[RMDB]
RNA sequence: GGGAACGACUCGAGUAGAGUCGAAAACAAGCAGCUCCCUCCCGAACCAGCGCACGACGACGGCGUCGCGGCCGUCUACGACAUCGCGGUUGCGCGUCGGCGCCGACCCGCUUGAGCGGUCCCCGACACUCCAAGUUAUGUUCGCAUAACUUGGAGUAAAAGAAACAACAACAACAAC
Reactivity to 2A3 in 0.01 (KOAc 150mM, MgCl2 10mM, bicine 150mM(pH8.5), 24C), signal-to-noise 6, nucleotides 027 to 126: c040a030a040g080c030a010g010c010u030c010c000c000u020c010c000c010g030a030a050c020c010a040g000c010g000c020a060c090g060a010c020g010a020c020g090g010c010g060u200c050g010c000g010g010c040c030g010u020c070u110a050c100g160a050c030a090u100c040g000c010g010g030u030u120g000c020g000c000g010u010c010g010g020c000g000c010c010g010a030c000c000c010g020c020u020u030g000a010g010c000g010g000u020c000c010c000c000g020a010c010
Reactivity to DMS in 0.01 (KOAc 150mM, MgCl2 10mM, bicine 150mM(pH8.5), 24C), signal-to-noise 3, nucleotides 027 to 126: c080a130a100g020c040a100g000c020u010c010c010c000u010c010c020c020g000a100a090c200c080a080g000c030g000c060a080c060g010a130c040g000a110c030g010g020c000g040u040c050g020c050g010g000c080c030g000u000c070u020a060c090g000a040c120a030u010c070g010c020g020g050u000u000g020c020g010c040g000u000c010g010g000c010g030c050c000g060a060c020c010c000g010c020u000u000g010a040g000c010g010g000u000c010c000c000c060g000a090c210

Structure probing data (2A3 and DMS) for a 177-nucleotide construct. Reactivities are given for positions 27 through 126. The reactions ran in a buffer of 150 mM KOAc, 10 mM MgCl2 and 150 mM bicine (pH 8.5), at 24 C. High 2A3 reactivity points to a flexible backbone, as in loops and unpaired stretches. It was measured as part of the RMDB libraries RFM100 and RFMREP.